Chemical mapping of a 177-nucleotide RNA with 2A3. Values cover nucleotides 27 to 126. 2A3 adducts were read by reverse transcription with SuperScript II with manganese. It was measured as part of the RMDB library OK1LIB. For 2A3, 300 sequencing reads were counted. The reactions ran in a buffer of 150 mM KOAc, 10 mM MgCl2 and 150 mM bicine (pH 8.5), at 24 C.
RNA sequence: GGGAACGACUCGAGUAGAGUCGAAAACUAUAAAGGGAUCUUUAUUUUGGCAGUGCGAACAUGGUAUCAGAGAGCGAUGAAAAUUGAUCCUGUCUGAUAAAAAUUGAUCCUGUCUGAUGAAAACUGACCGAGCGAAUUAGUUCGCUAAUUCGCUCGGAAAAGAAACAACAACAACAAC
Reactivity to 2A3 in 0.01 (KOAc 150mM, MgCl2 10mM, bicine 150mM(pH8.5), 24C), signal-to-noise 1, nucleotides 027 to 126: c000u000a000u280a180a050a140g030g010g030a060u060c090u030u110u040a040u170u160u110u170g140g000c090a080g090u010g050c060g050a000a000c070a050u100g050g050u000a000u000c050a000g060a030g000a010g110c030g000a000u020g260a000a020a140a220u030u120g000a000u000c000c000u000g100u020c000u000g000a000u000a090a100a000a040a000u080u010g000a000u000c000c030u020g020u020c150u060g190a240u190g140a000a190a000a000c020u000g010a070